This 177-nucleotide RNA was probed chemically with DMS. The RNA was probed in 150 mM KOAc, 10 mM MgCl2 and 150 mM bicine (pH 8.5) at 24 C. Source: RMDB library TTRDEL, as collected in RNAgym.
RNA sequence: GGGAACGACUCGAGUAGAGUCGAAAAGAUAUGGAUCAACGGGAGAUGAAUGUCGGAAACGACAUCCAUCAUCGAUCGUUAUCCUAAGUCAAAGACUUAGCCCUUUCUUCGGAAAGGGCUAAGUCAAGUUUUACUUAUUCUUCGGAAUAAGUAAAACAAAAGAAACAACAACAACAAC
Reactivity to DMS in 0.01 (KOAc 150mM, MgCl2 10mM, bicine 150mM(pH8.5), 24C), signal-to-noise 4, nucleotides 027 to 126: g010a030u000a280u010g000g000a020u000c130a020a000c000g010g000g000a190g010a010u000g010a020a020u000g020u000c000g010g010a060a070a160c000g010a010c000a010u010c080c050a060u000c010a180u000c090g010a160u010c010g000u000u000a130u000c000c000u010a020a140g010u010c020a100a120a110g000a010c000u000u000a000g000c000c000c000u030u000u000c000u000u010c200g020g000a020a000a000g000g000g010c010u000a000a000g000u000c000a010a040